[RMDB]
RNA sequence: GGGAACGACUCGAGUAGAGUCGAAAAAGCAGCUACGGCUGCAUAGUAACACUUAUAGGAACUGUCUGGUGUGGUCACGAAAGUGGCAAUUUAAUCAUAGCUUAAUUAAAUCCUGCUAUGGGGUAAAUUUGAGGUUAAUAUUCGUAUUAACCUCAAAAAAAGAAACAACAACAACAAC
Reactivity to 2A3 in 0.01 (KOAc 150mM, MgCl2 10mM, bicine 150mM(pH8.5), 24C), signal-to-noise 8, nucleotides 027 to 126: a000g010c010a000g000c000u030a050c160g150g010c000u000g000c010a010u050a020g090u070a050a010c010a030c070u120u090a070u120a240g150g030a110a080c070u090g120u120c050u050g060g040u090g040u040g100g000u020c000a010c020g050a110a040a040g010u020g000g000c000a020a070u090u160u180a060a040u080c010a000u000a010g010c010u070u050a040a010u060u180a040a060a070u040c000c000u000g000c000u000a010u000g010g000g000g010u010a010a070a110
Reactivity to DMS in 0.01 (KOAc 150mM, MgCl2 10mM, bicine 150mM(pH8.5), 24C), signal-to-noise 9, nucleotides 027 to 126: a110g000c010a010g010c010u000a090c190g040g010c000u000g010c010a020u020a060g010u010a120a090c070a080c060u010u020a110u020a090g010g010a100a110c070u010g010u000c050u020g000g010u010g010u000g000g010u000c020a010c010g010a100a130a110g000u000g000g000c020a070a060u050u030u020a030a030u010c000a000u000a010g000c010u020u030a080a070u030u020a010a010a090u030c010c000u000g000c000u000a000u000g000g000g000g010u000a070a050a140

Conditions: 150 mM KOAc, 10 mM MgCl2 and 150 mM bicine (pH 8.5), 24 C.
The record gives the reactivity of an RNA of 177 nucleotides to 2A3 and DMS.
Values are in units of 0.01, from 0 to 300, in steps of 10.